[RMDB]
RNA sequence: GGGAACGACUCGAGUAGAGUCGAAAAUCUUUGGCUUUCGAGCCAAAGAGUGGGUGCAAUGUCCUUUAAGCACCAAACACGGAUAAACCGUGAAAGGACAAAAAAAUCACAGUUUCGACUGUGAUAAAUGAGGGAUAGAAUUCGUUCUAUCCCUCAUAAAAGAAACAACAACAACAAC
Reactivity to 2A3 in 0.01 (KOAc 150mM, MgCl2 10mM, bicine 150mM(pH8.5), 24C), signal-to-noise 4, nucleotides 027 to 126: u000c010u000u000u010g000g020c000u040u050u110c260g110a000g000c010c000a000a000a000g010a010g020u100g110g020g000u020g000c050a190a300u090g020u010c000c020u010u050u070a050a000g000c000a000c010c000a010a030a000c010a000c000g000g010a060u120a260a210a140c000c000g000u000g000a020a020a000g000g000a010c010a030a080a010a020a000a010a010u020c010a000c010a000g000u020u040u140c170g100a010c000u000g000u000g000a000u030a000a090
Reactivity to DMS in 0.01 (KOAc 150mM, MgCl2 10mM, bicine 150mM(pH8.5), 24C), signal-to-noise 5, nucleotides 027 to 126: u000c000u000u000u000g000g000c000u000u000u000c190g020a000g010c010c000a000a010a010g010a030g010u020g000g010g010u000g010c010a210a120u010g020u000c000c000u000u000u010a100a170g010c020a010c000c000a070a150a240c010a020c000g010g000a280u010a060a140a210c010c010g020u000g000a030a070a040g010g010a010c010a000a000a020a100a070a130a040u000c000a000c000a010g000u000u000u000c200g000a030c000u000g030u000g000a010u000a010a060